[RMDB]
The data come from the RNA Mapping Database (RMDB), library TTRDES. An RNA of 177 nucleotides, treated with DMS and read out base by base. For DMS, 2,712 sequencing reads were counted. Conditions: 150 mM KOAc, 10 mM MgCl2 and 150 mM bicine (pH 8.5), 24 C. Reactivities are given for positions 27 through 126. For DMS the reverse transcriptase was MarathonRT.
RNA sequence: GGGAACGACUCGAGUAGAGUCGAAAAAAGAUAUGGAAAGCUUGUCAGCUCGAGAAUGCCGUUGAAAGCUUUCGGAAACGAAAGCUGGAGGCAUUCGAGAGCUUGGAUUUAGCUUUCCUAAGUCAAAGAAGGCUAAAUAGUUCGCUAUUUAGCCUUCAAAAGAAACAACAACAACAAC
Reactivity to DMS in 0.01 (KOAc 150mM, MgCl2 10mM, bicine 150mM(pH8.5), 24C), signal-to-noise 3, nucleotides 027 to 126: a120a070g010a090u000a300u010g020g000a010a030a010g020c000u000u000g040u000c000a060g000c010u010c000g010a300g000a030a000u000g000c000c000g030u010u020g000a210a120a060g010c000u010u010u000c000g000g000a120a110a130c010g000a010a000a010g010c000u000g000g000a020g000g000c000a000u000u000c000g000a300g000a010g010c010u000u020g020g010a020u010u000u010a010g000c000u000u000u000c000c000u010a020a060g000u000c030a090a120a180